[RMDB]
RNA sequence: GGGAACGACUCGAGUAGAGUCGAAAAGUCCCGUGGUCUCACUUCCAAAAGGAGGAGCGGGGGGACUUGGAACACGAGGGGACCAGUCCAGUCCGUGGGAACUACCCCGGAACUCCCGCUCUCCACACUAUAUGUUCUUCUUCGGAAGAACAUAUAGAAAAGAAACAACAACAACAAC
Reactivity to DMS in 0.01 (KOAc 150mM, MgCl2 10mM, bicine 150mM(pH8.5), 24C), signal-to-noise 4, nucleotides 027 to 126: g000u000c000c000c010g010u000g010g010u000c010u000c010a110c180u000u020c070c080a120a100a140a140g000g010a030g000g000a050g030c000g000g010g010g020g010g000a040c030u000u000g010g000a090a070c150a060c170g010a090g020g000g000g000a080c020c020a120g010u000c010c030a100g000u000c000c000g020u010g050g010g000a160a190c290u010a210c010c010c000c020g000g010a050a210c050u000c000c000c010g010c000u000c000u000c000c020a070c210a170
Reactivity to 2A3 in 0.01 (KOAc 150mM, MgCl2 10mM, bicine 150mM(pH8.5), 24C), signal-to-noise 4, nucleotides 027 to 126: g070u020c020c010c000g010u040g010g010u000c010u020c040a130c090u170u090c070c040a060a100a110a150g010g030a040g030g060a030g020c010g000g000g000g000g010g010a010c010u060u100g030g020a090a020c070a040c110g040a170g030g060g000g000a000c000c010a000g000u000c000c010a000g020u000c000c000g010u250g000g010g010a140a170c110u190a160c070c000c010c010g010g010a030a010c010u020c000c000c000g000c000u000c000u000c000c000a000c000a000